This 177-nucleotide RNA was probed chemically with 2A3 and DMS.
Source: RMDB library OK1LIB, as collected in RNAgym.
The RNA was probed in 150 mM KOAc, 10 mM MgCl2 and 150 mM bicine (pH 8.5) at 24 C.
Reactivities are given for positions 27 through 126.
2A3 adducts were read by reverse transcription with SuperScript II with manganese.
The 2A3 profile rests on 7,303 reads.
[RMDB]
RNA sequence: GGGAACGACUCGAGUAGAGUCGAAAAUGCGCGAGACCAACGCGGGCCUGGCGACCCAGUUGCAGGAGCGCGACCGCGAGCUCCGGCGCGCAACAGCGGGGGCCCUGGAGCGCCAGCAGCGCGCGGCUCAUAAAACGCCAUUCGUGGCGUUUUAUGAAAAAGAAACAACAACAACAAC
Reactivity to 2A3 in 0.01 (KOAc 150mM, MgCl2 10mM, bicine 150mM(pH8.5), 24C), signal-to-noise 4, nucleotides 027 to 126: u170g010c050g010c030g040a060g030a100c030c040a070a030c020g000c020g020g070g000c020c010u010g020g010c010g020a140c010c000c000a010g040u140u210g030c070a060g050g080a070g000c010g010c010g060a140c010c010g000c080g050a030g030c040u050c040c020g030g000c020g000c000g000c020a050a100c020a070g040c010g020g020g030g050g000c000c000c010u010g010g010a070g000c010g000c000c000a010g000c030a020g010c030g000c000g000c000g110g020c010
Reactivity to DMS in 0.01 (KOAc 150mM, MgCl2 10mM, bicine 150mM(pH8.5), 24C), signal-to-noise 4, nucleotides 027 to 126: u010g020c020g010c070g000a090g000a190c080c060a130a180c030g010c000g000g020g020c070c010u000g010g010c010g000a060c000c010c010a080g000u030u040g000c090a080g000g000a260g000c000g010c000g000a100c030c050g010c060g020a170g010c080u010c050c020g000g010c040g010c030g000c020a060a110c050a120g010c080g000g000g000g000g020c030c130c000u000g000g000a130g000c000g000c000c000a030g020c080a080g010c010g000c000g010c000g020g000c110